The record gives the reactivity of an RNA of 207 nucleotides to 2A3 and DMS. 2A3 adducts were read by reverse transcription with SuperScript II with manganese. The data come from the RNA Mapping Database (RMDB), library OK3TST.
RNA sequence: GGGAACGACUCGAGUAGAGUCGAAAACUAUAAGUGCCCAACACAACUCAAAGUCCAGACAAUAGCAGAGUGUCAGGGGAAGGAAAAGACUGAUUGGGCAUGAGUUAUCUGGAAAGACUUUCUAGAGGAAAUGGGGCUUAAAGAGCAAGUCUGAUUAUGCUAAUCAAAAUUUCGAUUUUGAUUAGCAAAAAGAAACAACAACAACAAC
Reactivity to 2A3 in 0.01 (KOAc 150mM, MgCl2 10mM, bicine 150mM(pH8.5), 24C), signal-to-noise 6, nucleotides 027 to 156: c030u040a030u050a300a030g040u080g080c000c010c010a010a030c040a010c020a070a120c020u050c060a070a110a030g040u020c020c010a010g020a060c020a100a120u060a110g030c050a020g040a040g080u040g030u020c050a060g040g010g030g050a030a040g030g030a030a100a040a040g050a040c050u060g010a140u030u040g010g000g000c000a000u030g000a000g010u040u050a030u070c050u030g020g030a040a060a030g050a070c030u060u090u010c060u090a030g010a020g020g050a050a070a090u110g010g000g000g010c010u020u030a100a060a000g060a010g020c030a040a000g130u000c020u130g040a030u300u300a050
Reactivity to DMS in 0.01 (KOAc 150mM, MgCl2 10mM, bicine 150mM(pH8.5), 24C), signal-to-noise 3, nucleotides 027 to 156: c050u010a090u000a120a210g030u000g010c000c000c000a050a030c090a100c080a070a070c040u000c020a110a070a190g000u000c010c000a110g020a200c040a080a060u000a130g030c040a060g020a180g010u000g010u000c010a070g010g020g020g000a100a080g010g000a060a090a120a150g000a110c040u010g010a130u000u000g020g010g040c010a030u010g000a190g020u000u000a080u000c030u010g010g010a180a110a120g010a110c080u010u000u010c040u000a100g020a050g040g010a060a070a060u000g000g000g000g000c030u000u000a030a050a070g000a090g010c040a040a070g000u000c020u000g010a100u000u000a160